This 177-nucleotide RNA was probed chemically with 2A3 and DMS. For 2A3, 3,228 sequencing reads were counted. Conditions: 150 mM KOAc, 10 mM MgCl2 and 150 mM bicine (pH 8.5), 24 C. 2A3 adducts were read by reverse transcription with SuperScript II with manganese. Reactivities are rounded to 0.1 and cut off at 0 and 3.
RNA sequence: GGGAACGACUCGAGUAGAGUCGAAAAAUGCCGCAUUCAGGGACGGUUACUCUAGUGGGCCACUGUCUAUCUAGCGUUGACAUCUACAUACUAUAUAGUAAUACCAAUACUCAAGACUACGAAACGGCAGGUAUAUGCGGUUCGCCGCAUAUACCUGAAAAGAAACAACAACAACAAC
Reactivity to 2A3 in 0.01 (KOAc 150mM, MgCl2 10mM, bicine 150mM(pH8.5), 24C), signal-to-noise 4, nucleotides 027 to 126: a000u120g040c020c010g020c010a070u050u070c020a050g060g000g020a030c000g010g010u040u070a030c000u000c000u030a030g050u130g040g020g010c030c010a070c040u020g020u010c010u040a120u050c010u030a020g040c030g060u020u040g020a010c000a060u030c030u040a040c030a090u050a050c020u040a060u090a080u090a170g050u040a110a040u030a090c000c050a050a030u030a050c020u010c060a060a060g050a100c050u070a070c080g070a090a090a000c010g040g020
Reactivity to DMS in 0.01 (KOAc 150mM, MgCl2 10mM, bicine 150mM(pH8.5), 24C), signal-to-noise 2, nucleotides 027 to 126: a120u010g020c000c040g000c050a020u000u000c040a210g000g000g040a070c050g000g000u000u000a010c060u010c000u000a050g030u010g020g000g000c030c220a090c070u020g040u030c010u000a150u010c030u020a080g020c000g000u000u010g060a070c120a090u000c090u000a090c090a070u000a090c060u000a080u020a090u000a050g040u000a080a030u000a070c090c030a010a060u010a100c080u020c080a030a070g000a060c070u020a100c010g010a040a050a060c110g000g000